This 207-nucleotide RNA was probed chemically with 2A3.
The 2A3 profile rests on 973 reads.
The reactions ran in a buffer of 150 mM KOAc, 10 mM MgCl2 and 150 mM bicine (pH 8.5), at 24 C.
[RMDB]
RNA sequence: GGGAACGACUCGAGUAGAGUCGAAAAUUAGUGAAGCAAAUCUCCAAACGCCAACGAUGAGCGUUUCGCAAUCGCCGCUUAAGGCUUUUGCCGAGGCUGCUUGAGCCUUGUUACCAAAGAAAAGCCGAAAACCCAAAUGUCUUCGGACAUUUGGGAAGCUGAUCAGUUAGUUCGCUAACUGAUCAGCAAAAGAAACAACAACAACAAC
Reactivity to 2A3 in 0.01 (KOAc 150mM, MgCl2 10mM, bicine 150mM(pH8.5), 24C), signal-to-noise 2, nucleotides 027 to 156: u140u100a030g090u020g130a090a000g040c040a090a030a180u100c090u000c080c020a030a000a050c000g030c000c040a140a070c250g130a210u110g040a030g000c000g040u030u070u100c040g010c010a000a050u020c040g000c040c020g030c080u180u220a160a090g000g000c000u000u000u000u000g000c020c000g010a000g000g000c040u100g010c000u070u040g020a010g000c000c010u010u030g030u120u190a080c010c010a040a020a000g040a000a060a020a010g010c030c010g090a010a030a050a060c000c000c000a000a000a000u000g000u000c000u020u030c040g100g010a000c000a010u000u010u020g000g000g010a000a000